[RMDB]
RNA sequence: GGGAACGACUCGAGUAGAGUCGAAAAUGGUUUCGACGGGGAUAAAGAAGCCGGAGUGGCAGGUCGAGGCGCCGCUGGCCUCGUUAAAAGCGGCACAAAUGUAAUUGCCAACAACGAUUACGAAUACGCAAUGGCAGCCUAAUUAGGCUUGCCGCACGUCCAAUAAGUUCUUCGGAACUUAUUGGACAAAAGAAACAACAACAACAAC
Reactivity to DMS in 0.01 (KOAc 150mM, MgCl2 10mM, bicine 150mM(pH8.5), 24C), signal-to-noise 1, nucleotides 027 to 156: u000g000g010u010u010u010c000g000a050c050g000g010g000g030a150u000a110a090a200g000a050a150g000c010c030g080g010a050g020u000g020g000c030a030g010g010u000c020g030a050g030g000c010g000c000c050g070c030u000g000g020c030c020u020c000g000u010u010a040a050a080a080g040c000g000g010c000a010c030a090a060a130u010g010u000a020a030u010u040g000c000c000a070a060c070a090a090c010g030a000u000u000a000c030g000a180a170u000a050c130g010c110a060a170u000g030g020c020a020g000c010c000u000a030a180u010u010a080g020g020c010u000u000g040c010c000g000c100a080c120
Reactivity to 2A3 in 0.01 (KOAc 150mM, MgCl2 10mM, bicine 150mM(pH8.5), 24C), signal-to-noise 3, nucleotides 027 to 156: u070g020g020u000u030u050c020g020a030c050g010g020g010g000a030u090a070a120a020g060a040a020g020c050c050g010g020a030g010u040g020g030c050a010g010g010u060c030g010a010g010g010c020g000c010c020g030c010u020g060g050c000c000u000c010g010u000u020a000a080a000a000g020c010g010g000c030a000c070a020a060a010u190g010u050a000a020u010u050g020c030c050a070a080c040a050a020c130g010a010u010u040a010c020g010a030a080u140a110c050g000c110a030a100u090g010g000c000a000g000c000c000u120a210a220u140u240a030g000g000c000u030u130g010c000c000g000c000a020c020